Chemical mapping of a 207-nucleotide RNA with 2A3.
RNA sequence: GGGAACGACUCGAGUAGAGUCGAAAAGUUGCAAAUAACGACAACUACGCUUUAGCAGCUUAAUGCUAACCGAUGCAAGAAUUGACUGUGGUUUGAAGCAUCGGCUAAACACACAGUCUAGCCAAGCUAUAUUGCUUGGAUAUAGUUUGGUAAAAACCCUCAGCUUUACCUUCGGGUAAAGCUGAGGAAAAGAAACAACAACAACAAC
Reactivity to 2A3 in 0.01 (KOAc 150mM, MgCl2 10mM, bicine 150mM(pH8.5), 24C), signal-to-noise 1, nucleotides 027 to 156: g040u060u060g040c090a180a260a190u270a170a120c110g190a110c000a020a020c000u120a040c130g010c000u010u000u000a000g000c040a000g000c000u080u250a170a020u140g000c000u010a020a000c000c000g000a000u000g000c010a000a070g000a010a010u000u000g000a000c000u000g000u000g050g020u000u020u030g020a100a000g000c000a000u000c010g020g000c000u150a140a200a000c000a000c000a000c000a010g000u000c000u000a000g000c010c000a000a000g000c000u000a000u000a000u000u080g120c200u090u250g100g010a000u000a000u000a000g000u000u000u000g000g010u010a000a000a000a000a060c000

Notes:
The RNA was probed in 150 mM KOAc, 10 mM MgCl2 and 150 mM bicine (pH 8.5) at 24 C. It was measured as part of the RMDB library RSTRND.